[RMDB]
The record gives the reactivity of an RNA of 177 nucleotides to DMS. Conditions: 150 mM KOAc, 10 mM MgCl2 and 150 mM bicine (pH 8.5), 24 C.
RNA sequence: GGGAACGACUCGAGUAGAGUCGAAAAGGUUCGCACUUCGGUGCGAACCAAAGGCUAAGCAAUAAAUAUCAGCUUGUUCGCUAAGCCACUAACGAGCAGAAAAAACCGUUUGGUUCGCCAAACGGAAUCAAUUGCCUUACUUCGGUAAGGCAAUUGAAAAAGAAACAACAACAACAAC
Reactivity to DMS in 0.01 (KOAc 150mM, MgCl2 10mM, bicine 150mM(pH8.5), 24C), signal-to-noise 1, nucleotides 027 to 126: g020g000u000u000c000g070c000a000c000u000u000c200g020g030u020g020c000g080a000a000c000c020a030a030a050g010g010c040u000a120a020g010c040a050a050u000a050a020a110u020a060u030c150a140g000c090u000u000g020u010u000c060g000c050u000a010a020g010c000c040a220c150u020a040a010c020g030a040g000c070a180g010a020a040a080a140a010a100c000c000g000u000u000u000g000g010u000u000c190g030c000c000a000a020a000c000g000g050a020a010
The DMS profile rests on 802 reads. High DMS reactivity at an A or C suggests that its Watson-Crick edge is free.